[RMDB]
RNA sequence: GGGAACGACUCGAGUAGAGUCGAAAAUAUCGUGUGGAUUGUCUGGGAAAUCAUGUACACCCGCAAAGACGAUGUGAUGAUGGAGUCGGUAAAACUCCUCGGCGUCUUUGCCAUCGUCUGUACACUGGGUAAAAGUGCAUUUCGAUGCACUUUUACCAAAAGAAACAACAACAACAAC
Reactivity to 2A3 in 0.01 (KOAc 150mM, MgCl2 10mM, bicine 150mM(pH8.5), 24C), signal-to-noise 2, nucleotides 027 to 126: u090a010u040c030g020u030g040u060g120g000a060u090u070g050u130c080u050g020g000g060a030a080a090u090c030a000u080g030u040a020c010a030c040c020c000g010c020a010a030a000g000a010c020g020a060u100g070u140g200a200u050g000a000u150g060g000a000g020u020c070g000g110u150a130a050a030a010c000u010c000c000u000c000g000g030c010g010u000c000u040u010u020g000c000c000a040u060c020g090u010c000u000g000u030a020c060a030c100u100g000
Reactivity to DMS in 0.01 (KOAc 150mM, MgCl2 10mM, bicine 150mM(pH8.5), 24C), signal-to-noise 3, nucleotides 027 to 126: u010a050u010c070g020u010g010u020g020g010a070u000u000g000u020c030u010g000g000g020a090a120a100u000c080a060u010g010u000a050c070a050c040c050c090g000c050a020a040a000g000a020c000g000a070u000g040u010g020a120u010g010a050u020g050g000a030g010u010c070g000g020u020a120a080a120a040c010u000c000c000u010c040g010g010c030g000u000c030u010u000u000g010c040c130a080u010c080g000u000c050u000g010u010a030c030a040c240u010g020